[RMDB]
RNA sequence: GGGAACGACUCGAGUAGAGUCGAAAAGGGAACUCGGCGAAUCGUCCCCGCAUGGCAGAGACCGAGCCCCCUUCGGAAAAGGACCGGAGGAGGGAGCUAGGAGCGUGGGGGGGCCGGUGGAGCCAUGAUACGUCAACCUUCGGGUUGACGAAAAGAAACAACAACAACAAC
Reactivity to DMS in 0.01 (KOAc 150mM, MgCl2 10mM, bicine 150mM(pH8.5), 24C), signal-to-noise 3, nucleotides 027 to 129: g080g110g030a150a060c000u030c010g000g000c060g030a060a040u040c050g030u010c160c000c000c060g090c020a000u000g000g050c040a070g010a300g030a100c000c000g030a110g060c000c020c000c010c000u000u070c000g050g060a060a100a090a100g000g000a120c030c020g000g050a050g030g020a110g020g000g010a020g020c060u030a140g040g010a110g020c080g010u110g050g000g010g010g000g030g010c020c010g090g020u040g010g080a300g000c000c040a020u020g010a120u130a080
Reactivity to 2A3 in 0.01 (KOAc 150mM, MgCl2 10mM, bicine 150mM(pH8.5), 24C), signal-to-noise 5, nucleotides 027 to 129: g080g010g040a010a010c020u000c020g020g000c020g030a020a030u030c000g010u010c010c000c000c000g060c000a000u000g010g000c020a020g020a010g060a270c000c000g000a030g000c000c000c000c000c000u070u110c030g050g020a040a070a070a070g090g030a050c000c060g000g020a060g020g040a080g020g030g000a010g000c000u060a070g020g050a060g030c080g020u140g020g010g010g000g000g010g000c010c000g000g020u010g010g000a010g000c010c000a000u010g010a010u050a010
Chemical mapping of a 170-nucleotide RNA with DMS and 2A3. For DMS the reverse transcriptase was MarathonRT. The data come from the RNA Mapping Database (RMDB), library 15KLIB. For 2A3 the reverse transcriptase was SuperScript II with manganese.